Structure probing data (DMS) for a 177-nucleotide construct.
For DMS, 2,636 sequencing reads were counted.
The reactions ran in a buffer of 150 mM KOAc, 10 mM MgCl2 and 150 mM bicine (pH 8.5), at 24 C.
RNA sequence: GGGAACGACUCGAGUAGAGUCGAAAAGAUAUGGAUAGGUGCAAGCUACUUGAGGAAUGGAGCUGAUAUCGGAAACGAUAUUCUAGCUAUGAAGUUCCCUCAAGUAGCUUGCACCUAUCCUAAGUCACGAACAAAGUUAGUUCGCUAACUUUGUUCGAAAAGAAACAACAACAACAAC
Reactivity to DMS in 0.01 (KOAc 150mM, MgCl2 10mM, bicine 150mM(pH8.5), 24C), signal-to-noise 2, nucleotides 027 to 126: g010a070u000a300u000g000g000a010u000a010g000g030u000g020c000a010a000g020c000u000a010c000u030u000g030a040g000g010a040a020u000g000g000a010g030c000u010g010a030u000a010u010c000g020g000a170a090a270c000g020a020u000a010u000u000c090u000a010g010c010u010a270u000g020a170a220g010u000u000c160c030c020u000c000a010a000g000u010a000g000c000u000u000g000c000a000c000c000u000a000u000c010c000u000a000a040g010u000c030a300